RNA sequence: GGGAACGACUCGAGUAGAGUCGAAAAAUGAGACGUAGCUGCCAAUCAUAUAAACCUCGCCGUGGGCGAAGUUGAUCAUGCCGAUAAUGCCGUAAACCAUGGUGUAGCCGAUGGCUAUCAGCGCGUACACUGCCGUAAUGUUCGCAUUACGGCAGUGAAAAGAAACAACAACAACAAC
Reactivity to DMS in 0.01 (KOAc 150mM, MgCl2 10mM, bicine 150mM(pH8.5), 24C), signal-to-noise 3, nucleotides 027 to 126: a050u010g000a090g020a100c060g020u010a090g020c010u000g030c060c080a110a120u000c050a080u020a100u020a100a040a060c060c020u000c020g000c020c030g060u010g020g030g000c010g010a030a040g010u000u000g010a060u000c190a090u000g010c110c050g000a080u010a070a050u010g010c030c020g020u000a030a080a100c050c060a070u000g000g010u010g010u010a080g000c050c040g000a110u010g010g010c060u000a170u000c040a050g020c060g030c080g030u000a120
Reactivity to 2A3 in 0.01 (KOAc 150mM, MgCl2 10mM, bicine 150mM(pH8.5), 24C), signal-to-noise 2, nucleotides 027 to 126: a000u140g010a070g000a030c030g030u070a040g020c020u020g010c000c030a040a050u030c020a030u020a010u040a160a090a050c000c010u040c000g020c030c070g190u140g120g020g000c000g000a030a020g030u050u050g020a050u030c060a050u090g050c040c010g030a040u060a200a030u130g030c000c010g030u020a030a040a150c010c000a020u050g050g000u090g070u060a010g000c050c060g210a110u090g030g000c030u040a030u060c000a000g030c000g000c000g030u010a020
Chemical mapping of a 177-nucleotide RNA with DMS and 2A3.
2A3 adducts were read by reverse transcription with SuperScript II with manganese.
DMS adducts were read by reverse transcription with MarathonRT.
For DMS, 2,334 sequencing reads were counted.